[RMDB]
RNA sequence: GGGAACGACUCGAGUAGAGUCGAAAAGUGGUUUAUCACACUCCGUGACUGCGCGUAUCCACGUUAUAACCGGGUGUGGUAUUGCGCCUGUUCAGCAUAUAAUAGCCUCCUUCUCAGGGCAGCGUAUUGAGCAGUUGUGAGUGAUCAAUAUGCCCACCAAUACGGCACUGUUCGCAGUGCCGUAUUGAAAAGAAACAACAACAACAAC
Reactivity to DMS in 0.01 (KOAc 150mM, MgCl2 10mM, bicine 150mM(pH8.5), 24C), signal-to-noise 1, nucleotides 027 to 156: g000u000g010g040u010u000u010a050u000c080a120c000a030c010u000c050c050g030u000g010a100c090u000g020c080g000c030g020u000a180u010c060c050a030c000g020u020u010a070u000a070a160c090c040g000g000g010u000g040u020g000g040u010a040u000u000g030c000g000c000c040u010g040u010u000c010a090g000c030a110u000a050u010a070a140u000a090g010c020c010u000c050c050u000u010c080u010c040a110g000g010g050c050a100g020c110g060u000a030u000u000g020a060g020c030a030g030u000u000g030u000g030a170g010u010g000a100u000c030a050a060u010a110u000g000c000c010c000a100c260
Reactivity to 2A3 in 0.01 (KOAc 150mM, MgCl2 10mM, bicine 150mM(pH8.5), 24C), signal-to-noise 4, nucleotides 027 to 156: g050u040g050g060u040u100u060a080u090c070a010c010a010c060u060c040c040g110u070g120a120c100u070g000c020g000c010g050u090a110u160c090c020a000c030g030u110u130a200u120a240a060c080c050g050g060g030u080g010u080g040g010u040a040u050u250g000c030g060c000c000u030g020u050u030c020a040g020c080a060u100a000u040a250a120u130a110g000c000c020u040c010c040u150u060c070u020c070a030g000g020g030c030a010g020c000g020u040a070u060u090g000a000g030c020a000g010u130u100g060u090g070a050g020u070g030a060u020c000a030a040u020a010u130g020c000c010c000a030c010